RNA sequence: GGGAACGACUCGAGUAGAGUCGAAAAGGGGUCUACAUCGAUCAGCUCGAUGAGCUUGGAUUUAUGCUGAAGCCUCCACGGCAUUGUCAGCUUAAGAGCUGGGAGUAGACGGAGGCACCCAAAUGGAUGUACAUGUAUUCGUACAUGUACAUCCAAACGUAUAAGGUAUCUUCGGAUACCUUAUACGAAAAGAAACAACAACAACAAC
Reactivity to DMS in 0.01 (KOAc 150mM, MgCl2 10mM, bicine 150mM(pH8.5), 24C), signal-to-noise 3, nucleotides 027 to 156: g000g020g030g020u010c000u000a020c000a240u000c100g000a090u000c010a030g000c000u000c010g000a230u020g000a030g020c110u010u000g020g030a100u000u010u000a030u000g010c010u000g000a050a110g010c010c010u000c010c020a300c000g010g000c010a030u000u000g000u000c040a060g010c020u010u010a070a300g010a040g030c010u000g000g000g010a050g010u000a030g020a070c050g010g030a030g060g000c020a110c010c010c010a060a080a150u000g010g010a010u000g000u000a010c000a010u000g010u000a000u000u010c300g000u000a000c010a010u010g000u000a000c010a000u000c010c000a000a020a050
Reactivity to 2A3 in 0.01 (KOAc 150mM, MgCl2 10mM, bicine 150mM(pH8.5), 24C), signal-to-noise 8, nucleotides 027 to 156: g040g010g010g010u000c010u010a020c020a170u300c060g080a060u070c010a020g000c000u000c020g300a300u300g090a060g020c100u170u170g080g000a080u170u260u140a010u070g000c000u020g020a070a030g010c010c000u000c010c000a030c020g000g000c000a000u010u030g040u070c050a040g010c030u040u050a170a060g000a000g000c000u000g000g000g000a020g000u000a000g000a000c010g000g000a000g000g000c010a030c010c010c010a040a090a020u080g000g000a000u000g000u000a000c000a000u000g010u010a020u030u100c260g030u030a000c000a000u000g000u000a000c000a000u010c000c000a000a010a000
Chemical mapping of a 207-nucleotide RNA with DMS and 2A3. Reactivities are given for positions 27 through 156.